[RMDB]
The record gives the reactivity of an RNA of 207 nucleotides to 2A3.
RNA sequence: GGGAACGACUCGAGUAGAGUCGAAAAGAGGCGAAAUAAUUCCCAUCUCCUGUGUACGGCCGGAGAUGGGUUUGGCCGUACUAAUAAGCCUCAUAGUGACGAGAGUCACGAAUUCUGGAUAGCCUAUGGUAGUCGGCUAUCCUAUGACUACCGUAGACGCUAGGAGCGUAUUCGUACGCUCCUAGCGAAAAGAAACAACAACAACAAC
Reactivity to 2A3 in 0.01 (KOAc 150mM, MgCl2 10mM, bicine 150mM(pH8.5), 24C), signal-to-noise 1, nucleotides 027 to 156: g020a000g010g000c010g110a000a130a040u290a040a060u180u090c020c010c000a020u000c000u000c000c010u030g000u050g030u130a030c010g100g010c020c090g040g000a010g000a010u040g070g000g000u010u010u020g010g030c030c030g000u020a030c000u030a020a100u030a030a020g000c000c000u020c030a020u090a060g000u020g000a030c000g000a000g000a030g080u000c000a000c020g000a010a040u130u040c030u100g010g010a010u010a030g040c000c010u000a040u000g130g000u030a020g100u040c010g010g000c040u030a050u050c020c000u030a120u080g030a050c000u000a060c000c050g040u070a080g030a030